[RMDB]
The record gives the reactivity of an RNA of 177 nucleotides to 2A3 and DMS.
The DMS profile rests on 1,273 reads.
Reactivities are given for positions 27 through 126.
The 2A3 profile rests on 512 reads.
Values are in units of 0.01, from 0 to 300, in steps of 10.
The reactions ran in a buffer of 150 mM KOAc, 10 mM MgCl2 and 150 mM bicine (pH 8.5), at 24 C.
2A3 adducts were read by reverse transcription with SuperScript II with manganese.
It was measured as part of the RMDB library OK1LIB.

RNA sequence: GGGAACGACUCGAGUAGAGUCGAAAACUUUCACUGUACUGCUGCAGCAGUCUCUUCAGGUAGCUAAAUUAGGAGCUUGUUUUGGAGAAAUGAAGCAAAGGUGAAUGACAGCCUAGGCUUGAAAUUAUCGCUGUGAGAAUUUCGAUUCUCACAGCGAAAAAGAAACAACAACAACAAC
Reactivity to 2A3 in 0.01 (KOAc 150mM, MgCl2 10mM, bicine 150mM(pH8.5), 24C), signal-to-noise 1, nucleotides 027 to 126: c020u080u070u010c020a030c050u020g100u110a030c000u020g080c000u020g050c020a030g000c020a110g030u020c000u000c000u080u050c000a000g000g070u020a000g020c030u120a080a070a190u240u120a160g020g280a090g020c060u090u160g080u000u030u080u070g010g000a050g000a030a100a050u060g100a000a000g000c000a000a000a050g020g050u040g000a040a080u010g070a080c040a000g020c020c000u010a020g020g160c040u000u030g020a030a030a030u000u000a100
Reactivity to DMS in 0.01 (KOAc 150mM, MgCl2 10mM, bicine 150mM(pH8.5), 24C), signal-to-noise 1, nucleotides 027 to 126: c070u020u080u000c030a020c010u030g000u010a080c060u000g010c000u000g000c090a080g040c110a080g040u000c020u040c040u040u000c080a070g000g000u020a010g030c020u000a010a010a140u030u030a030g000g010a030g020c020u000u000g000u000u000u000u040g020g000a090g000a040a040a130u000g000a060a070g000c000a010a070a140g000g000u000g010a040a000u030g000a270c190a070g010c070c020u030a030g000g000c040u000u000g000a000a110a020u020u000a080